This 177-nucleotide RNA was probed chemically with 2A3.
The data come from the RNA Mapping Database (RMDB), library RFM100.
2A3 adducts were read by reverse transcription with SuperScript II with manganese.

[RMDB]
RNA sequence: GGGAACGACUCGAGUAGAGUCGAAAACACUCUCUCCGUUUCCCUUCCCACAGCUAUCAUCCGGACUAGCAUUUCCUGUACAUACUAGGGAAGGGAAAUGGAGAGAGUGUAUAAUGAAUUGCAUGCUUCUUCUCUUAGCGUUCGCGCUAAGAGAAGAAAAAGAAACAACAACAACAAC
Reactivity to 2A3 in 0.01 (KOAc 150mM, MgCl2 10mM, bicine 150mM(pH8.5), 24C), signal-to-noise 1, nucleotides 027 to 126: c000a000c000u000c000u030c000u000c020c010g000u000u000u020c050c000c010u000u000c110c000c000a080c020a080g030c070u080a000u000c010a030u000c020c100g070g060a070c070u080a000g020c020a150u110u000u130c020c000u010g000u060a000c000a100u020a000c010u010a010g000g000g020a000a000g000g000g050a000a000a000u010g000g000a000g030a000g000a000g000u000g000u020a010u010a000a000u030g130a010a100u030u030g060c080a010u170g020c060u000